[RMDB]
RNA sequence: GGGAACGACUCGAGUAGAGUCGAAAAAGGCGUGGACUCUUGCUAAACUUGAAGAAAAACGAGAAAAAUAGAUGAUGCAUUCUUGGUUAUUCCUUCUUGUAUUGCUAGCUUUAGCAGCGGUAGUAUCCCAUCUGUCAAUCUUCGGAUUGACAGAUGGAAAAGAAACAACAACAACAAC
Reactivity to 2A3 in 0.01 (KOAc 150mM, MgCl2 10mM, bicine 150mM(pH8.5), 24C), signal-to-noise 1, nucleotides 027 to 126: a000g000g020c000g030u040g020g030a050c000u000c000u060u000g000c010u080a050a150a130c010u000u000g020a000a080g040a070a040a000a010a000c000g050a020g060a050a060a080a060a020u180a060g110a100u210g030a030u060g050c070a070u080u000c050u080u070g160g000u050u040a080u140u110c010c000u010u030c040u050u080g060u040a160u010u120g030c050u100a190g000c000u120u100u020a050g040c090a010g000c030g050g000u060a030g040u010a050u050c000
Reactivity to DMS in 0.01 (KOAc 150mM, MgCl2 10mM, bicine 150mM(pH8.5), 24C), signal-to-noise 2, nucleotides 027 to 126: a110g000g000c010g050u000g000g020a160c050u000c030u000u000g000c000u000a050a110a090c040u010u000g010a040a020g010a040a040a060a040a060c050g000a030g020a010a020a040a110a170u010a100g020a110u010g010a150u010g040c150a110u010u000c010u010u000g040g010u000u000a130u000u010c030c020u000u000c020u000u000g010u010a120u000u000g010c070u000a060g020c140u000u000u010a040g020c040a170g020c080g000g000u000a050g010u000a080u000c060

Source: RMDB library OK2TRN, as collected in RNAgym. This 177-nucleotide RNA was probed chemically with 2A3 and DMS. 2A3 adducts were read by reverse transcription with SuperScript II with manganese. The RNA was probed in 150 mM KOAc, 10 mM MgCl2 and 150 mM bicine (pH 8.5) at 24 C. Values cover nucleotides 27 to 126.